[RMDB]
RNA sequence: GGGAACGACUCGAGUAGAGUCGAAAAGAACGAAACUUCGGUUUCGUUCAAAUAAUGCGUAGCUCGCGCAACGCAGGCAACGAGUAGGUCGUGCCACCUACAAAAGAUUUUAGUUCGCUAAAAUCAAGCUACCUGAAUAGUUCGCUAUUCAGGUAGCAAAAGAAACAACAACAACAAC
Reactivity to DMS in 0.01 (KOAc 150mM, MgCl2 10mM, bicine 150mM(pH8.5), 24C), signal-to-noise 2, nucleotides 027 to 126: g010a010a000c000g000a010a000a020c000u000u010c200g040g000u000u000u000c000g010u010u000c000a060a060a060u010a110a030u000g000c000g020u000a030g020c000u000c220g020c210g010c040a050a040c080g050c010a040g000g000c100a070a050c030g020a130g030u000a020g000g020u000c060g030u000g020c120c110a110c000c000u000a000c000a090a080a090a160g010a020u000u000u000u010a000g000u000u010c200g010c000u000a020a010a000a000u000c010a090a110
Reactivity to 2A3 in 0.01 (KOAc 150mM, MgCl2 10mM, bicine 150mM(pH8.5), 24C), signal-to-noise 2, nucleotides 027 to 126: g000a000a000c000g000a000a010a010c020u050u090c160g030g000u000u010u000c000g000u000u000c000a000a000a000u120a020a040u050g020c010g000u010a030g000c040u030c100g050c020g000c080a000a020c030g000c030a050g060g000c020a070a070c050g020a040g030u030a030g000g050u080c060g070u080g060c050c030a020c000c000u010a020c000a000a120a000a020g020a020u010u030u000u000a010g020u020u040c230g020c090u000a000a000a000a020u010c010a000a020